[RMDB]
RNA sequence: GGGAACGACUCGAGUAGAGUCGAAAAGCCGCACGGGCGCAGUGCUGCGCGAGACUCUAUGCCCGUGACAGAGUGGUAUCAGAGCAGGACUUGCUUCACAUAAAAUACCCAAUCGAUGAUGCACAACCAUAUAUUGCCAGUUCGCUGGCAAUAUAUGAAAAGAAACAACAACAACAAC
Reactivity to 2A3 in 0.01 (KOAc 150mM, MgCl2 10mM, bicine 150mM(pH8.5), 24C), signal-to-noise 4, nucleotides 027 to 126: g040c000c020g000c010a010c010g000g020g000c030g000c050a020g010u030g040c050u070g050c060g020c040g030a030g030a080c010u000c010u040a030u100g000c020c000c000g020u020g010a030c040a040g120a020g050u180g010g000u040a040u050c060a020g020a000g060c020a020g070g140a120c060u120u060g010c000u070u100c040a030c000a090u210a040a090a030a010u090a050c000c000c000a000a040u100c070g090a090u070g020a030u110g020c050a010c010a080a070c050
Reactivity to DMS in 0.01 (KOAc 150mM, MgCl2 10mM, bicine 150mM(pH8.5), 24C), signal-to-noise 5, nucleotides 027 to 126: g000c040c040g020c010a020c020g000g010g030c000g020c070a060g020u000g010c050u000g020c060g000c110g010a130g020a120c020u000c030u010a060u010g000c010c000c000g000u000g000a100c110a070g010a110g020u010g020g010u000a030u000c100a170g000a080g010c040a040g000g000a100c110u010u000g000c010u000u000c090a100c130a100u010a030a060a060a050u000a080c010c000c040a100a110u000c100g010a090u000g010a060u000g010c040a030c080a060a080c130